[RMDB]
The record gives the reactivity of an RNA of 207 nucleotides to DMS and 2A3. For 2A3 the reverse transcriptase was SuperScript II with manganese. For DMS, 15,032 sequencing reads were counted. For 2A3, 3,018 sequencing reads were counted.
RNA sequence: GGGAACGACUCGAGUAGAGUCGAAAAGUCGAUUGUCUAUUGGGCCAGCAACUGUGAGUUCUGUAUUCACGAUAAGGGAUAAAUUCUGUGACUGAUAUGCGAAACACUAUAGUUUGUUUUCUCACCACAUUCGUCAAGUGCGGCCUCCAGUUGAACGUAAAAACAACCUAUUCGUAGGUUGUUUUUAAAAAGAAACAACAACAACAAC
Reactivity to DMS in 0.01 (KOAc 150mM, MgCl2 10mM, bicine 150mM(pH8.5), 24C), signal-to-noise 6, nucleotides 027 to 156: g020u000c020g010a100u000u000g010u000c030u000a150u000u000g020g030g030c050c040a150g030c030a020a050c020u000g010u000g030a050g020u000u010c050u020g020u000a060u010u000c050a070c050g020a120u000a090a130g010g010g020a110u010a040a070a090u000u000c030u000g030u000g010a130c040u010g020a070u000a050u000g020c040g000a120a060a100c050a060c080u000a160u000a120g010u000u000u000g020u000u000u000u000c040u010c050a160c080c030a030c050a120u000u000c060g000u000c070a050a080g030u000g030c010g000g010c300c000u010c030c020a050g000u010u000g010a070a090c090g000
Reactivity to 2A3 in 0.01 (KOAc 150mM, MgCl2 10mM, bicine 150mM(pH8.5), 24C), signal-to-noise 5, nucleotides 027 to 156: g090u040c020g040a130u060u120g030u050c000u110a090u080u130g030g020g020c020c030a040g020c040a030a030c040u030g030u080g100a020g030u130u110c030u030g060u080a070u080u070c010a000c040g020a040u060a140a160g040g000g000a020u100a080a180a030u180u020c030u040g070u050g040a030c050u020g040a050u040a020u210g030c050g020a030a040a010c010a010c030u090a050u060a300g100u070u070u100g020u030u040u050u010c050u020c020a040c050c010a050c010a050u090u060c010g000u040c050a100a050g020u010g020c010g040g010c000c000u000c000c000a000g000u000u010g050a090a040c050g010